[RMDB]
RNA sequence: GGGAACGACUCGAGUAGAGUCGAAAAAAUAGCGGGUCAAGGAACAACGCAGAGAGAUAGGCUCAUCCCAAGUUCUCUUCGGAGUACCAAGACUUCGGUACAGAAGAGAUACCGACUCUUCAUAGAAUCCACUAUCGGAAUUCGUUCCGAUAGUGGAAAAAGAAACAACAACAACAAC
Reactivity to DMS in 0.01 (KOAc 150mM, MgCl2 10mM, bicine 150mM(pH8.5), 24C), signal-to-noise 2, nucleotides 027 to 126: a110a060u010a100g000c000g010g020g010u000c080a070a240g000g000a140a050c060a030a140c090g000c080a070g000a080g000a060g010a030u010a110g000g000c020u000c130a080u020c150c000c030a080a140g010u020u000c000u000c030u010u010c000g000g030a190g010u010a010c000c000a060a260g010a070c290u010u000c100g010g010u030a030c080a170g020a010a010g000a010g000a010u000a050c040c040g000a100c080u000c020u000u000c050a120u010a140g010a100a110
Reactivity to 2A3 in 0.01 (KOAc 150mM, MgCl2 10mM, bicine 150mM(pH8.5), 24C), signal-to-noise 1, nucleotides 027 to 126: a000a000u210a000g040c060g020g000g000u050c050a070a040g020g000a110a060c030a100a000c050g000c130a000g000a010g000a000g010a080u060a030g090g000c000u000c000a080u050c000c010c000a030a020g040u090u000c000u000c000u000u030c030g020g000a100g000u010a010c000c010a040a060g140a180c030u210u030c090g020g000u020a010c030a020g000a000a000g000a010g020a030u050a050c010c000g040a060c020u000c010u080u020c010a050u060a110g120a050a060
Source information
Structure probing data (DMS and 2A3) for a 177-nucleotide construct. The reactions ran in a buffer of 150 mM KOAc, 10 mM MgCl2 and 150 mM bicine (pH 8.5), at 24 C. The data come from the RNA Mapping Database (RMDB), library M2PK90.